[RMDB]
This 207-nucleotide RNA was probed chemically with DMS and 2A3. The DMS profile rests on 2,165 reads. Source: RMDB library OK3TST, as collected in RNAgym. Conditions: 150 mM KOAc, 10 mM MgCl2 and 150 mM bicine (pH 8.5), 24 C.

RNA sequence: GGGAACGACUCGAGUAGAGUCGAAAAAACGUUGACCAAUAGACGCGCAUUUGCAGUGGGAUUCCGUCAAGCUCAAUGCUAAAAGUUUGGUCUGGAUAGCUUGAGAUUGGAAUGAUUAUAUUAUUAGCCAUGAAUCAAUUCCCCCAUCUUUUGUUAACAUCCAGUAUCUUUUCGAAGAUACUGGAUGAAAAGAAACAACAACAACAAC
Reactivity to DMS in 0.01 (KOAc 150mM, MgCl2 10mM, bicine 150mM(pH8.5), 24C), signal-to-noise 1, nucleotides 027 to 156: a120a010c060g000u020u000g010a220c060c080a040a160u000a220g020a050c050g000c020g030c080a240u000u000u000g000c020a080g000u000g020g000g020a110u010u000c020c140g100u000c070a030a040g000c020u000c020a060a030u010g020c050u010a030a130a080a110g030u000u000u000g020g010u010c020u000g030g000a290u030a040g050c020u010u000g020a030g000a120u000u000g000g010a070a120u020g010a100u000u000a070u000a100u020u010a170u000u010a180g020c050c050a070u000g010a060a130u000c020a030a240u000u000c030c000c030c040c020a100u000c040u010u000u000u000g000u000u010a120a260
Reactivity to 2A3 in 0.01 (KOAc 150mM, MgCl2 10mM, bicine 150mM(pH8.5), 24C), signal-to-noise 2, nucleotides 027 to 156: a000a000c060g010u020u080g010a040c000c040a030a000u080a100g090a080c020g030c000g000c060a050u060u060u150g000c070a030g020u060g030g000g060a060u130u040c070c020g120u080c040a050a050g020c000u000c010a030a040u110g000c000u130a050a060a030a140g060u070u040u050g020g020u030c000u000g060g030a110u060a070g010c000u000u010g020a030g000a060u100u100g000g020a050a040u010g030a070u100u150a100u130a050u300u070a060u090u040a030g050c020c010a030u050g080a020a080u040c030a090a150u060u050c000c060c000c000c030a050u010c020u010u120u090u070g030u080u100a020a040